[RMDB]
This 177-nucleotide RNA was probed chemically with DMS and 2A3.
The RNA was probed in 150 mM KOAc, 10 mM MgCl2 and 150 mM bicine (pH 8.5) at 24 C.
2A3 adducts were read by reverse transcription with SuperScript II with manganese.

RNA sequence: GGGAACGACUCGAGUAGAGUCGAAAAUUAAUGAGGACCAAAUGGCUGUAAAGCCCGUAUUGCUCGAAAUGGUCCUAAACAGCCAAAUCGGGCAAAUCGAGCAAUCCCAACGACAGCGACAAAACAACUUAAUAAAUGCUUUCGAGCAUUUAUUAAGAAAAGAAACAACAACAACAAC
Reactivity to DMS in 0.01 (KOAc 150mM, MgCl2 10mM, bicine 150mM(pH8.5), 24C), signal-to-noise 4, nucleotides 027 to 126: u010u010a090a100u020g010a150g010g000a070c050c040a060a120a080u000g010g000c000u000g000u030a100a120a100g000c010c000c140g040u000a170u000u000g010c000u010c000g010a010a070a250u000g000g010u000c020c010u000a030a070a100c230a270g010c000c010a010a020a260u000c030g010g010g020c020a020a020a300u000c000g000a010g000c010a120a070u000c010c000c010a080a110c180g010a040c020a010g010c020g010a050c120a040a040a110a080c150a060a100
Reactivity to 2A3 in 0.01 (KOAc 150mM, MgCl2 10mM, bicine 150mM(pH8.5), 24C), signal-to-noise 1, nucleotides 027 to 126: u090u070a050a140u120g050a090g040g080a020c020c020a050a020a120u150g060g000c000u020g040u140a140a080a080g000c030c000c010g010u110a150u030u000g000c020u010c010g000a000a010a050u020g000g000u000c030c010u010a000a030a000c000a010g000c010c000a030a000a050u040c010g000g000g000c000a030a010a000u030c010g000a000g000c000a020a110u020c010c000c010a020a020c020g070a010c020a040g010c000g040a050c050a040a140a030a030c010a020a020